Description:
An RNA of 207 nucleotides, treated with 2A3 and DMS and read out base by base. The reactions ran in a buffer of 150 mM KOAc, 10 mM MgCl2 and 150 mM bicine (pH 8.5), at 24 C. DMS adducts were read by reverse transcription with MarathonRT. Values are in units of 0.01, from 0 to 300, in steps of 10. For 2A3, 1,927 sequencing reads were counted.
[RMDB]
RNA sequence: GGGAACGACUCGAGUAGAGUCGAAAACACAGAUAGCUACAUGUGUCUCUAGUGAGAGGUACUAGUCCUCUUUGACAUUUCUCUUAAAGCGGAAUUUAUUUGGGGUAGUGAUGGUUUUACUGGUAGCCAUAGGGGAAGAUAAGAAAAGGGGGCCAAACUAGCUAAUUAUGUUCGCAUAAUUAGCUAGAAAAGAAACAACAACAACAAC
Reactivity to 2A3 in 0.01 (KOAc 150mM, MgCl2 10mM, bicine 150mM(pH8.5), 24C), signal-to-noise 4, nucleotides 027 to 156: c050a000c020a020g100a120u130a050g060c060u110a060c050a110u090g020u000g020u020c020u020c030u100a070g050u060g090a030g000a000g010g020u070a120c090u090a060g080u040c000c000u000c000u030u030u080g030a030c010a060u040u110u010c050u000c000u030u190a130a070a020g090c020g060g080a070a060u130u160u100a100u080u110u210g040g000g010g010u040a020g020u030g120a070u030g000g050u010u060u040u070a050c050u050g050g030u040a010g000c000c020a030u050a020g030g000g020g000a000a060g010a090u100a090a060g050a030a070a000a000g000g000g010g020g000c000c070a020a030a010
Reactivity to DMS in 0.01 (KOAc 150mM, MgCl2 10mM, bicine 150mM(pH8.5), 24C), signal-to-noise 2, nucleotides 027 to 156: c030a120c100a050g010a150u000a060g020c060u000a070c060a140u020g000u000g050u000c000u000c100u000a140g030u000g010a090g000a060g040g030u010a110c080u000a230g010u000c000c010u000c060u000u000u020g000a100c050a090u010u010u000c000u000c040u000u000a020a060a070g060c100g020g010a090a070u000u000u000a040u040u020u000g020g030g000g050u000a060g000u000g030a090u000g010g000u000u010u000u000a150c060u010g040g030u010a080g040c030c030a090u000a040g010g000g000g010a060a080g020a110u010a080a110g000a050a080a090a120g020g030g010g020g010c010c000a010a040a160